The record gives the reactivity of an RNA of 177 nucleotides to DMS and 2A3. DMS adducts were read by reverse transcription with MarathonRT. Source: RMDB library M2PK90, as collected in RNAgym.
RNA sequence: GGGAACGACUCGAGUAGAGUCGAAAACAUUAGGUUCGGCAUCCCACCCUACGGCUUCGAAAAGCUGAGAUGAGCUCAGCAAGGGAACUCAAGAGACUCAACUCAGAGAACUCAGAGAGAGAAUAAAGGUUAAUAGUUAGUUCGCUAACUAUUAACCAAAAGAAACAACAACAACAAC
Reactivity to DMS in 0.01 (KOAc 150mM, MgCl2 10mM, bicine 150mM(pH8.5), 24C), signal-to-noise 3, nucleotides 027 to 126: c050a100u010u010a090g010g000u000u010c040g000g020c060a100u010c030c030c050a200c080c020c030u000a050c080g000g010c050u010u000c060g010a120a110a080a130g020c000u000g010a040g010a120u010g000a120g030c010u000c000a010g000c180a100a070g010g000g030a040a140c040u000c040a110a110g010a050g000a080c060u000c020a020a040c060u000c060a110g000a070g010a040a100c070u000c020a070g000a130g000a080g000a040g020a070a080u000a050a090a080
Reactivity to 2A3 in 0.01 (KOAc 150mM, MgCl2 10mM, bicine 150mM(pH8.5), 24C), signal-to-noise 3, nucleotides 027 to 126: c030a060u140u210a070g060g040u070u090c060g010g020c010a080u030c000c000c020a040c010c010c000u020a040c040g050g010c020u060u060c090g060a010a070a040a070g010c020u000g010a010g000a060u100g060a050g040c000u000c010a010g000c000a030a020g020g000g040a070a050c000u010c050a030a040g010a030g010a170c030u000c020a030a100c040u000c070a040g000a000g010a140a020c010u020c070a010g020a000g000a010g000a010g050a180a070u170a160a130a030